[RMDB]
RNA sequence: GGGAACGACUCGAGUAGAGUCGAAAAAAUCGGUGAAACUUAGUUUCAUGGUCGUUGGUAGAAGUAAGUGUAAUGCAGACUCACUUCUGAAGAAACUGAGGAUACGACUGAUAUUCUAGUUUUACAACCAAAAUUAGUGAUUCGUCACUAAUUUUGGAAAAGAAACAACAACAACAAC
Reactivity to 2A3 in 0.01 (KOAc 150mM, MgCl2 10mM, bicine 150mM(pH8.5), 24C), signal-to-noise 9, nucleotides 027 to 126: a000a000u110c060g020g010u030g020a080a010a020c010u030u020a030g020u010u010u020c100a120u220g110g020u070c080g070u060u120g100g030u110a020g000a050a010g000u040a040a030g010u010g070u180a140a170u300g140c070a040g030a090c010u010c010a010c000u010u000c010u040g080a140a070g020a040a040a010c040u070g030a030g060g030a060u060a170c080g030a010c040u020g020a030u010a040u090u030c020u010a040g010u000u010u000u040a090c100a070a080
Reactivity to DMS in 0.01 (KOAc 150mM, MgCl2 10mM, bicine 150mM(pH8.5), 24C), signal-to-noise 7, nucleotides 027 to 126: a060a020u010c000g000g010u000g010a120a080a140c000u000u000a020g010u000u010u000c010a090u050g010g010u010c040g000u010u000g000g010u020a000g010a010a010g010u000a030a010g020u000g010u050a100a100u080g010c210a080g010a040c000u000c050a010c000u000u000c000u000g010a090a070g000a010a020a000c000u000g000a010g000g010a120u030a070c300g000a030c030u000g000a030u000a040u000u000c020u000a050g010u000u020u010u000a070c220a120a180

Chemical mapping of a 177-nucleotide RNA with 2A3 and DMS. The 2A3 profile rests on 17,915 reads.